[RMDB]
The data come from the RNA Mapping Database (RMDB), library RNAMAK.
An RNA of 207 nucleotides, treated with 2A3 and read out base by base.
Reactivities are given for positions 27 through 156.
2A3 adducts were read by reverse transcription with SuperScript II with manganese.
The reactions ran in a buffer of 150 mM KOAc, 10 mM MgCl2 and 150 mM bicine (pH 8.5), at 24 C.
RNA sequence: GGGAACGACUCGAGUAGAGUCGAAAAGGGGUCGCAACUGCAGAACAAGUUCAAUGACGUGGAGCACUGAAGCCUCCACGGUGCGAUGAAAUAAGACAGAACUUGGUAAUAAAGUUGCGACGGAGGCACCCAAAACACCCGCCUUCGGGCGGGUGAACAUCACUUAUUGGUUCGCCAAUAAGUGAUGAAAAGAAACAACAACAACAAC
Reactivity to 2A3 in 0.01 (KOAc 150mM, MgCl2 10mM, bicine 150mM(pH8.5), 24C), signal-to-noise 1, nucleotides 027 to 156: g000g010g000g020u000c010g000c000a000a000c000u050g020c060a020g010a170a080c000a010a010g000u000u000c040a080a260u090g080a100c010g020u000g030g020a020g040c010a000c200u140g060a140a060g040c030c050u000c000c000a000c060g000g000u110g020c080g080a100u160g040a020a130a030u180a050a050g160a040c040a130g010a000a000c000u000u020g020g020u090a060a060u020a010a050a000g000u000u000g010c000g000a000c010g000g020a000g000g050c030a020c000c030c000a010a010a010a010c010a000c000c040c000g040c030c040u010u090c220g040g000g000c000g000g000g030u000g000a000a000